[RMDB]
RNA sequence: GGGAACGACUCGAGUAGAGUCGAAAAGUGAAAUGAGGGAAGCUCUAUACCAAGUGUAAGUGUAGUUUAAUUCUGCCCAGCACAUCUGGAGGGGAACAUGUGUGUAGGUGCAUCACAUUCCCAAGCCAGAAAAAUUUUAGGUGAUUCAAAAUGAACACUUGAACUAGUUGUUCGCAACUAGUUCAAGAAAAGAAACAACAACAACAAC
Reactivity to 2A3 in 0.01 (KOAc 150mM, MgCl2 10mM, bicine 150mM(pH8.5), 24C), signal-to-noise 4, nucleotides 027 to 156: g050u040g020a010a050a080u110g000a070g040g020g030a050a020g030c010u020c020u060a080u050a080c030c040a080a060g030u010g040u140a100a120g010u020g040u110a020g020u030u050u190a090a080u150u030c010u030g020c000c010c010a020g000c020a020c000a040u030c020u010g000g030a060g010g030g000g000a020a020c060a090u050g010u000g000u000g050u060a070g060g120u140g060c010a010u110c010a010c000a020u030u030c000c000c000a010a030g010c000c000a000g000a070a020a000a020a030u160u190u100u090a030g000g040u040g070a080u130u090c040a030a090a060a130u240g010a040a060c100a010
Reactivity to DMS in 0.01 (KOAc 150mM, MgCl2 10mM, bicine 150mM(pH8.5), 24C), signal-to-noise 2, nucleotides 027 to 156: g020u000g020a100a070a110u000g030a100g030g000g030a070a160g030c090u000c020u010a090u010a070c000c020a090a170g030u040g020u010a060a050g020u000g000u000a040g020u000u000u010a050a130u010u000c050u000g050c020c030c020a150g000c110a080c150a120u000c050u010g060g000a240g060g000g010g020a080a000c060a070u000g020u000g000u000g000u000a070g020g030u000g020c000a150u000c060a000c020a090u000u000c010c030c000a030a160g000c050c120a060g000a030a050a030a060a170u000u000u000u000a130g010g050u000g010a150u000u000c070a070a080a050a130u020g010a050a110c100a150
Notes
Source: RMDB library OK3TST, as collected in RNAgym. This 207-nucleotide RNA was probed chemically with 2A3 and DMS. 2A3 is a SHAPE reagent: it acylates the 2'-hydroxyl of flexible nucleotides of all four kinds. DMS adducts were read by reverse transcription with MarathonRT.